RNA sequence: GGGAACGACUCGAGUAGAGUCGAAAAACGUAUGGAGACUGUCGGGUACGAGGUGCACGUGCUGGUGGGCACCGAAGGGGGCUCGGGAAGGCUUCCCGAAGGAUUCCCGGGGGAAGUUCGGGUCGAGACUGUCAGGCUAUUUCGAUAGCCUGACAGUAAAAGAAACAACAACAACAAC
Reactivity to DMS in 0.01 (KOAc 150mM, MgCl2 10mM, bicine 150mM(pH8.5), 24C), signal-to-noise 1, nucleotides 027 to 126: a120c150g020u010a030u010g010g000a110g020a090c070u010g020u010c140g000g010g010u000a080c070g000a130g020g020u000g010c060a110c030g000u000g000c050u000g020g030u010g000g010g020c050a020c030c040g020a100a140g010g010g000g000g000c070u020c030g020g010g010a160a100g000g020c140u000u010c010c020c000g030a100a080g000g020a240u010u010c050c030c020g010g000g010g010g060a100a060g000u000u000c030g000g000g000u000c030g000a110g010
Conditions: 150 mM KOAc, 10 mM MgCl2 and 150 mM bicine (pH 8.5), 24 C. An RNA of 177 nucleotides, treated with DMS and read out base by base. For DMS the reverse transcriptase was MarathonRT.